[RMDB]
RNA sequence: GGGAACGACUCGAGUAGAGUCGAAAAUCUUCUUGUUCUCCAGGGCCUUCCUUCUUCUGUGCUCCUGCCUCUCCUUGUCGGUGAACCCCCUGGCCUUGGGUUUCCUCCCAGGUCCGAAAUCAACCUCAACGGGAAUACUUCGGUAUUCCCAAAAGAAACAACAACAACAAC
Reactivity to DMS in 0.01 (KOAc 150mM, MgCl2 10mM, bicine 150mM(pH8.5), 24C), signal-to-noise 5, nucleotides 027 to 129: u030c060u030u010c040u010u010g000u000u000c020u030c010c090a260g020g030g030c020c010u000u000c000c030u010u040c030u030u030c060u010g030u040g030c070u030c020c040u000g000c090c020u010c030u000c010c010u010u030g030u030c000g010g000u000g010a070a100c030c010c000c040c000u020g030g020c000c050u000u000g000g000g000u020u050u050c110c090u000c000c000c020a000g030g020u030c030c060g010a020a020a030u060c210a040a080c040c040u040c100a140a020c200
Reactivity to 2A3 in 0.01 (KOAc 150mM, MgCl2 10mM, bicine 150mM(pH8.5), 24C), signal-to-noise 5, nucleotides 027 to 129: u030c010u090u000c010u020u080g000u050u030c020u000c010c000a000g060g000g000c010c010u040u050c060c000u040u040c030u050u030c030u070g090u080g040c010u010c000c010u040g020c000c000u020c000u010c000c020u010u080g040u050c040g000g030u060g100a060a050c000c000c000c000c010u020g000g000c000c000u020u040g000g000g010u030u070u050c010c020u030c000c000c000a000g000g000u000c000c020g040a030a020a030u100c020a030a060c010c030u140c050a040a030c040

An RNA of 170 nucleotides, treated with DMS and 2A3 and read out base by base. For 2A3 the reverse transcriptase was SuperScript II with manganese. The DMS profile rests on 28,558 reads. Conditions: 150 mM KOAc, 10 mM MgCl2 and 150 mM bicine (pH 8.5), 24 C.